[RMDB]
Structure probing data (DMS and 2A3) for a 177-nucleotide construct. Source: RMDB library OK1LIB, as collected in RNAgym.
RNA sequence: GGGAACGACUCGAGUAGAGUCGAAAAUGGCUCAGAGGCUCUGGAUGUGUGCCCAUCAACAACUUGAUGGAAGACGCCGCCACUGCUGAAGUGUCUCGUUGUCAAUUGUAUCAAUGGGUGAAACACGAUCAGGUGCAUCAUUCGUGAUGCACCUGAUAAAAGAAACAACAACAACAAC
Reactivity to DMS in 0.01 (KOAc 150mM, MgCl2 10mM, bicine 150mM(pH8.5), 24C), signal-to-noise 2, nucleotides 027 to 126: u010g020g030c020u000c030a090g050a300g000g000c010u000c130u000g010g040a050u000g000u020g020u010g040c090c010c000a020u000c110a030a020c210a110a140c300u020u000g020a040u000g010g000a030a130g020a160c030g020c000c060g000c020c020a030c090u010g050c110u010g000a170a030g020u000g020u010c040u000c020g020u000u040g030u000c040a000a150u000u000g000u000a140u000c070a010a050u000g000g000g000u010g000a080a050a060c110a090c080g030
Reactivity to 2A3 in 0.01 (KOAc 150mM, MgCl2 10mM, bicine 150mM(pH8.5), 24C), signal-to-noise 1, nucleotides 027 to 126: u110g020g000c010u000c000a000g090a050g060g000c000u010c000u080g020g120a300u100g110u010g030u050g160c010c010c010a000u010c050a000a070c000a020a050c080u090u010g000a000u050g010g020a050a070g030a020c050g020c000c000g080c070c000a010c010u070g030c000u060g010a160a070g050u010g030u000c080u080c050g050u020u050g000u010c010a080a060u030u120g070u070a030u180c030a010a090u080g020g000g060u110g220a120a120a050c080a010c060g040